RNA sequence: GGGAACGACUCGAGUAGAGUCGAAAAUCUUAAAGGAGCUUAUUAAAUCAAUUGUUGGAGUAUGGUCUACAACGAGAGAAUUAGAAACCCAGAUUGCUUCUUUUGCCUUUUUGAUCAAUACCACCAACUAUUAUAUGCGUUUCGACGCAUAUAAUAGAAAAGAAACAACAACAACAAC
Reactivity to DMS in 0.01 (KOAc 150mM, MgCl2 10mM, bicine 150mM(pH8.5), 24C), signal-to-noise 4, nucleotides 027 to 126: u010c030u010u010a000a020a050g010g010a070g020c100u010u020a080u010u010a060a070a070u010c030a040a210u000u010g010u010u010g000g010a100g020u000a100u000g020g000u000c010u010a080c050a020a040c060g000a030g000a300g000a060a080u000u010a080g000a080a120a080c050c020c060a120g000a080u000u000g010c040u010u000c020u000u000u010u000g010c040c020u000u000u010u000u010g010a040u000c040a050a070u010a150c060c030a080c110c100a050a180
Reactivity to 2A3 in 0.01 (KOAc 150mM, MgCl2 10mM, bicine 150mM(pH8.5), 24C), signal-to-noise 4, nucleotides 027 to 126: u000c000u010u060a020a000a020g050g020a040g050c030u210u180a040u140u270a300a180a070u110c040a030a050u020u060g030u050u020g020g010a030g030u110a150u280g070g020u040c010u030a030c020a030a010c030g000a010g000a000g010a110a030u070u030a070g110a100a040a000c050c000c000a040g040a170u050u080g000c010u040u030c000u000u060u020u080g040c000c000u090u060u020u060u100g020a020u030c040a040a060u060a130c020c040a040c030c020a050a030
The record gives the reactivity of an RNA of 177 nucleotides to DMS and 2A3.
DMS adducts were read by reverse transcription with MarathonRT.
The reactions ran in a buffer of 150 mM KOAc, 10 mM MgCl2 and 150 mM bicine (pH 8.5), at 24 C.
The DMS profile rests on 3,797 reads.